[RMDB]
An RNA of 177 nucleotides, treated with DMS and 2A3 and read out base by base. Conditions: 150 mM KOAc, 10 mM MgCl2 and 150 mM bicine (pH 8.5), 24 C. Source: RMDB library M2PK50, as collected in RNAgym.
RNA sequence: GGGAACGACUCGAGUAGAGUCGAAAACUCGAAUCUUUCGAGAUUCGAGACUCUCGAAGUGUCAAUAAGAUCGAAAAGAUCGCCGACCAUAAAAUAGACACAAUGCUGCUUGAUUCGUCAAGCAGAAUAGUUGUAGCAAGUUCGCUUGCUACAACUAAAAAGAAACAACAACAACAAC
Reactivity to DMS in 0.01 (KOAc 150mM, MgCl2 10mM, bicine 150mM(pH8.5), 24C), signal-to-noise 3, nucleotides 027 to 126: c020u000c000g010a020a020u040c000u000u010u010c140g020a020g030a010u000u000c000g010a000g010a100c180u010c010u010c020g040a120a100g020u000g010u000c010a090a100u010a120a080g010a000u000c010g010a080a050a140a170g000a020u000c010g000c250c110g000a080c120c090a080u010a060a020a130a050u000a080g000a020c040a010c050a090a060u000g040c010u000g010c000u000u000g010a060u000u010c190g020u000c000a000a010g010c000a000g010a120a080
Reactivity to 2A3 in 0.01 (KOAc 150mM, MgCl2 10mM, bicine 150mM(pH8.5), 24C), signal-to-noise 2, nucleotides 027 to 126: c010u010c010g000a010a000u000c010u040u100u130c190g090a030g000a020u000u020c000g000a020g040a010c010u010c000u010c030g080a300a050g030u040g010u030c010a000a100u110a160a070g020a010u000c000g040a090a080a150a230g010a020u000c020g030c020c070g110a090c010c020a030u240a080a170a000a020u130a040g030a010c010a000c000a020a130u190g000c000u000g020c000u000u020g010a010u020u040c100g060u000c100a000a000g010c000a000g010a010a000